[RMDB]
RNA sequence: GGGAACGACUCGAGUAGAGUCGAAAACAGAGCUGAUGGGCCAUGUACCUAUCCCAAAUGAGAUCCCAUCUUGCACACUGUGCUAAUUUGAGAUUCUCAUGCCUCCUACUUGGAGAGAUCUGGACUACUAACUGUAUGACGUUCGCGUCAUACAGAACCCGAUGAUUAGGUUCGCCUAAUCAUCGGGAAAAGAAACAACAACAACAAC
Reactivity to 2A3 in 0.01 (KOAc 150mM, MgCl2 10mM, bicine 150mM(pH8.5), 24C), signal-to-noise 3, nucleotides 027 to 156: c010a000g040a010g060c120u140g020a050u060g010g010g010c010c070a120u230g100u140a090c000c010u050a070u080c080c030c020a040a180a010u030g000a010g010a030u030c020c010c000a000u000c020u040u040g020c020a070c010a070c180u230g000u000g030c080u160a070a080u010u030u060g050a060g000a010u280u010c000u010c010a000u070g020c000c000u000c000c010u160a300c050u080u190g010g000a020g000a000g010a030u000c040u050g040g060a040c060u120a090c020u070a300a060c000u040g030u000a000u010g000a000c000g000u030u060c110g020c000g080u000c000a000u000a010c010a020g000a000a030
Overview: This 207-nucleotide RNA was probed chemically with 2A3. Conditions: 150 mM KOAc, 10 mM MgCl2 and 150 mM bicine (pH 8.5), 24 C. The data come from the RNA Mapping Database (RMDB), library M2RFPK. 2A3 is a SHAPE reagent: it acylates the 2'-hydroxyl of flexible nucleotides of all four kinds. For 2A3 the reverse transcriptase was SuperScript II with manganese.